[RMDB]
RNA sequence: GGGAACGACUCGAGUAGAGUCGAAAAUCCCCUCGAUCCACCUUCGAGGGGGUUCACACCCCCAACCGGCGGGCCGGCUACUCUUCUUUCCCUUCUCUCGUCAUCCUUGGUCAACCUCUUAAGUUCCGUUAUGUAGUCUGUUCGCAGACUACAUAACAAAAGAAACAACAACAACAAC
Reactivity to 2A3 in 0.01 (KOAc 150mM, MgCl2 10mM, bicine 150mM(pH8.5), 24C), signal-to-noise 1, nucleotides 027 to 126: u000c010c000c030c010u000c000g030a010u080c110c090a120c000c060u010u030c030g020a030g010g020g000g000g020u070u100c000a070c000a010c040c000c000c000c000a040a050c080c010g070g020c020g010g040g050c010c020g050g080c050u100a070c020u060c010u050u030c030u050u050u070c030c020c000u100u030c030u020c010u020c030g090u000c010a040u020c010c000u010u040g040g000u070c010a050a050c050c010u050c000u090u130a090a060g030u100u050c010c010
Reactivity to DMS in 0.01 (KOAc 150mM, MgCl2 10mM, bicine 150mM(pH8.5), 24C), signal-to-noise 2, nucleotides 027 to 126: u000c000c000c000c010u000c010g010a030u010c080c170a070c130c080u010u000c000g010a020g030g010g000g000g020u010u000c080a050c180a270c040c000c010c030c040a090a050c080c080g020g000c040g010g010g020c050c010g000g000c020u010a050c080u000c050u000u000c050u000u000u010c020c010c000u000u010c010u000c030u000c040g000u000c020a030u010c020c040u000u000g010g010u000c040a080a090c050c030u000c040u010u000a060a100g010u000u000c030c050